Overview:
Structure probing data (DMS and 2A3) for a 177-nucleotide construct. It was measured as part of the RMDB library OK1LIB.

[RMDB]
RNA sequence: GGGAACGACUCGAGUAGAGUCGAAAACUUACAACACCGGGUUCUAGGAUCCACUCGGACACUCGACGGGCGAUUUUGCGGCGAGGGAUCGCUUGGGGGUUAAAGUCCCAGUGCCCACCACUCAAAAGGGUAUAAUAAUCUUCGGAUUAUUAUACCCAAAAGAAACAACAACAACAAC
Reactivity to DMS in 0.01 (KOAc 150mM, MgCl2 10mM, bicine 150mM(pH8.5), 24C), signal-to-noise 3, nucleotides 027 to 126: c040u000u040a050c150a060a120c100a070c060c040g000g040g000u000u000c060u000a080g020g010a060u010c050c020a050c020u000c160g000g000a040c070a100c060u000c020g000a100c110g000g010g030c050g010a040u020u000u000u020g000c040g000g010c030g010a020g000g040g000a040u000c030g030c030u000u000g000g000g020g020g010u000u010a080a100a110g000u020c010c010c020a110g010u010g000c060c010c010a060c080c090a050c150u030c080a050a060a140a060
Reactivity to 2A3 in 0.01 (KOAc 150mM, MgCl2 10mM, bicine 150mM(pH8.5), 24C), signal-to-noise 2, nucleotides 027 to 126: c020u050u130a040c030a130a000c020a040c020c020g000g000g050u090u040c090u050a070g050g010a030u030c010c000a030c000u010c020g020g030a020c000a020c040u020c000g080a060c020g010g000g000c000g010a020u030u030u010u140g040c030g070g000c030g020a000g010g020g000a020u040c010g020c020u030u060g150g000g000g000g010u040u120a110a020a000g020u010c000c000c000a000g010u020g050c020c000c010a070c010c000a030c020u080c050a040a060a040a030